Source: RMDB library RFM100, as collected in RNAgym. Chemical mapping of a 177-nucleotide RNA with 2A3 and DMS.
RNA sequence: GGGAACGACUCGAGUAGAGUCGAAAAGGGUGCGUAGGCGGCCUGUUAAGUAGGGCGUGAAAUCUGUCGGCUCAACCGGCAAAUUGCGUUCUAAACUGGCAGGCUUGAGUGGGUCAGGGGUGUGUGGCCUGAAUGGUUCUUUCGAGAACCAUUCAGGAAAAGAAACAACAACAACAAC
Reactivity to 2A3 in 0.01 (KOAc 150mM, MgCl2 10mM, bicine 150mM(pH8.5), 24C), signal-to-noise 2, nucleotides 027 to 126: g060g030g000u190g010c090g110u130a020g020g090c010g000g000c020c010u000g000u010u010a030a040g010u000a010g000g030g000c000g040u050g100a050a030a020u020c020u020g000u000c010g020g000c060u080c210a120a210c060c000g000g010c000a010a000a040u020u020g020c000g020u030u000c000u010a040a060a050c010u010g000g000c000a000g000g000c020u010u000g010a010g000u070g000g030g010u110c150a060g030g000g010g000u080g040u030g020u060g090g000
Reactivity to DMS in 0.01 (KOAc 150mM, MgCl2 10mM, bicine 150mM(pH8.5), 24C), signal-to-noise 1, nucleotides 027 to 126: g000g010g070u000g000c100g030u030a100g020g030c130g000g000c000c000u000g000u000u000a010a000g000u000a020g000g010g000c000g040u000g000a000a020a060u000c120u000g010u020c000g020g010c200u140c300a110a260c030c000g000g000c020a010a010a020u000u000g000c000g000u000u000c000u010a020a010a050c000u000g020g000c000a010g000g000c010u010u000g030a110g040u010g000g000g000u030c070a050g000g010g020g030u000g000u020g000u010g000g000
About this RNA: 2A3 adducts were read by reverse transcription with SuperScript II with manganese. The RNA was probed in 150 mM KOAc, 10 mM MgCl2 and 150 mM bicine (pH 8.5) at 24 C. Reactivities are rounded to 0.1 and cut off at 0 and 3. DMS adducts were read by reverse transcription with MarathonRT.